[RMDB]
RNA sequence: GGGAACGACUCGAGUAGAGUCGAAAAAGAGCUACAACCUCCUUGCAAAUUCUUGAUUGCGGGACCAAAAGGACCUGAAAUCCGAUAUCUCUAUUUUGUUAAAAAUCUUAACAACCUUCAUCGCGGGACAGCGCCGAGUUCGCUCGGCGCAAAAGAAACAACAACAACAAC
Reactivity to DMS in 0.01 (KOAc 150mM, MgCl2 10mM, bicine 150mM(pH8.5), 24C), signal-to-noise 2, nucleotides 027 to 129: a040g000a060g040c180u020a120c250a040a130c120c030u000c000c000u000u000g030c080a060a010a130u040u010c160u030u110g000a060u000u000g000c010g070g000g010a030c160c030a000a080a120a000g010g060a100c000c000u060g070a000a040a160u020c040c190g030a110u060a070u000c040u000c000u030a100u000u110u050u110g030u000u180a030a000a000a240a030u050c060u000u000a000a050c050a040a050c050c070u010u040c060a040u000c070g000c000g060g000g000a040c170a130
Reactivity to 2A3 in 0.01 (KOAc 150mM, MgCl2 10mM, bicine 150mM(pH8.5), 24C), signal-to-noise 2, nucleotides 027 to 129: a000g020a020g000c040u090a120c020a110a020c010c000u000c000c000u040u200g020c020a040a040a100u070u070c050u110u150g220a140u000u050g030c020g000g000g000a000c000c000a030a000a040a060g040g010a030c000c040u050g060a000a000a040u000c010c000g040a020u000a140u090c000u000c090u030a120u050u050u010u020g000u020u000a000a000a010a000a010u030c020u010u020a030a020c030a010a010c020c000u010u030c020a110u080c000g010c040g030g000g050a020c000a030